[RMDB]
RNA sequence: GGGAACGACUCGAGUAGAGUCGAAAAUUUAGCUGUGAACAAAGACUUAGACUAAGUGCAAAAAAUAAAUCCUCUUUUGCAACCCAGAACUCAUGGCUCAGUAUGAGUUUUGAUACAGAUAAGAAGGUUACAACCGGAUUUUCGAAUCCGGUUGUAAAAAAGAAACAACAACAACAAC
Reactivity to 2A3 in 0.01 (KOAc 150mM, MgCl2 10mM, bicine 150mM(pH8.5), 24C), signal-to-noise 2, nucleotides 027 to 126: u020u020u040a040g000c030u020g040u060g130a190a130c020a040a110a020g090a050c050u060u070a100g050a080c040u050a130a090g010u030g010c010a010a000a000a070a070a010u220a020a130a000u090c030c010u000c070u050u000u030u050g000c000a000a020c000c000c000a000g000a010a020c000u020c000a030u000g080g000c060u050c110a060g000u200a060u020g020a010g000u000u000u000u050g000a000u010a030c020a090g000a040u070a110a000g090a030a030g140g070
Reactivity to DMS in 0.01 (KOAc 150mM, MgCl2 10mM, bicine 150mM(pH8.5), 24C), signal-to-noise 1, nucleotides 027 to 126: u020u050u000a010g010c070u000g010u000g050a030a110c140a090a040a030g010a100c020u000u050a020g000a090c050u000a050a030g010u020g010c020a020a000a030a090a030a030u030a050a070a060u050c040c010u000c040u000u010u030u030g000c000a050a080c110c040c040a080g010a040a050c030u000c020a020u040g000g000c050u040c110a100g000u010a000u000g000a040g040u000u000u000u000g000a090u030a030c120a090g000a090u010a040a100g020a040a110g040g050

Chemical mapping of a 177-nucleotide RNA with 2A3 and DMS. Values cover nucleotides 27 to 126.